Background
The data come from the RNA Mapping Database (RMDB), library M2RFPK. Structure probing data (DMS and 2A3) for a 207-nucleotide construct. Reactivities are given for positions 27 through 156. The reactions ran in a buffer of 150 mM KOAc, 10 mM MgCl2 and 150 mM bicine (pH 8.5), at 24 C.

RNA sequence: GGGAACGACUCGAGUAGAGUCGAAAAGAACACGUCUCGGGACGACGCUAAACUCGCCCUGGUAGGGAUGGGUUUAACGACCCCUCGGGUUUCCUAGUUCCUAAAACUAGGUGGUGGAGUCAUAUAAAAAACUUCUACACGUUCGCGUGUAGAAGAAGUUUAUAGAUGUGUUCGCACAUCUAUAAACAAAAGAAACAACAACAACAAC
Reactivity to DMS in 0.01 (KOAc 150mM, MgCl2 10mM, bicine 150mM(pH8.5), 24C), signal-to-noise 2, nucleotides 027 to 156: g000a100a080c040a100c050g040u000c030u010c030g020g000g040a060c000g040a200c020g030c050u000a060a090a080c100u000c000g000c000c000c000u000g030g030u010a100g000g010g020a010u000g020g000g010u000u000u000a030a080c050g010a120c000c030c020c020u000c070g100g000g010u000u020u000c010c010u000a030g000u000u000c040c040u000a060a050a090a020c030u000a030g000g030u000g040g000u000g010g010a210g020u000c020a140u030a100u050a010a090a040a100a050a090c010u010u000c010u000a010c000a010c010g010u000u000c270g030c030g050u020g000u000a000g010a020a010g000a010a060
Reactivity to 2A3 in 0.01 (KOAc 150mM, MgCl2 10mM, bicine 150mM(pH8.5), 24C), signal-to-noise 2, nucleotides 027 to 156: g040a070a040c070a000c110g020u000c000u010c020g040g030g000a080c300g000a020c030g070c220u010a010a000a010c000u000c020g040c020c000c000u060g130g040u170a100g000g070g000a090u060g030g000g010u010u050u040a080a010c010g020a020c000c000c000c000u030c070g010g000g000u020u040u000c000c010u000a000g010u000u040c020c050u120a030a030a010a010c020u000a020g030g000u020g030g000u040g030g050a050g060u060c060a030u110a010u290a200a070a010a020a010a040c000u000u020c000u010a000c000a000c020g040u060u050c150g020c000g060u000g010u000a000g000a010a000g000a010a000